[RMDB]
Structure probing data (DMS and 2A3) for a 207-nucleotide construct. 2A3 adducts were read by reverse transcription with SuperScript II with manganese. The 2A3 profile rests on 1,693 reads. 2A3 is a SHAPE reagent: it acylates the 2'-hydroxyl of flexible nucleotides of all four kinds. DMS adducts were read by reverse transcription with MarathonRT.
RNA sequence: GGGAACGACUCGAGUAGAGUCGAAAAGGUGCUCUGAAUGGAGUGCUCUACUGAGUUUAUAAAAUAGAAGGUAAGCUAUUAUCUCUUACAACAGGGCAGGGCUUGUUGGAAUAGGCGGUAAAGUCUAAAAACUACCUCACCUUCGGGUGAGGUAGAACCAGUACAUUAACUUCGGUUAAUGUACUGGAAAAGAAACAACAACAACAAC
Reactivity to DMS in 0.01 (KOAc 150mM, MgCl2 10mM, bicine 150mM(pH8.5), 24C), signal-to-noise 1, nucleotides 027 to 156: g010g060u010g010c010u030c020u010g000a180a110u000g000g040a010g020u000g000c000u010c020u000a060c040u000g010a110g010u010u000u000a090u000a170a090a060a130u000a110g010a080a160g000g000u000a010a120g000c080u000a100u000u010a150u000c010u000c050u000u000a080c070a030a290c020a080g030g010g050c050a180g030g010g020c000u000u000g010u000u010g010g000a020a080u000a040g010g000c060g000g000u010a000a030a090g000u000c040u010a010a100a060a120a110c000u000a010c000c020u010c010a000c010c010u000u010c300g060g040g040u010g010a010g010g010u000a000g000a010a040
Reactivity to 2A3 in 0.01 (KOAc 150mM, MgCl2 10mM, bicine 150mM(pH8.5), 24C), signal-to-noise 3, nucleotides 027 to 156: g130g030u060g010c010u010c030u050g130a160a060u280g000g000a020g020u060g010c010u010c010u060a060c050u030g010a020g050u070u100u040a210u110a070a120a080a090u120a040g040a080a040g060g010u060a040a000g030c010u010a080u100u040a100u180c060u020c010u040u070a030c030a090a010c000a070g030g010g000c020a010g050g000g000c030u020u010g010u000u010g000g000a080a040u020a030g000g000c040g040g020u110a130a070a080g000u000c020u070a080a070a010a010a020c000u000a010c010c000u000c000a010c020c000u000u050c230g040g000g000u010g000a000g000g010u000a000g000a000a000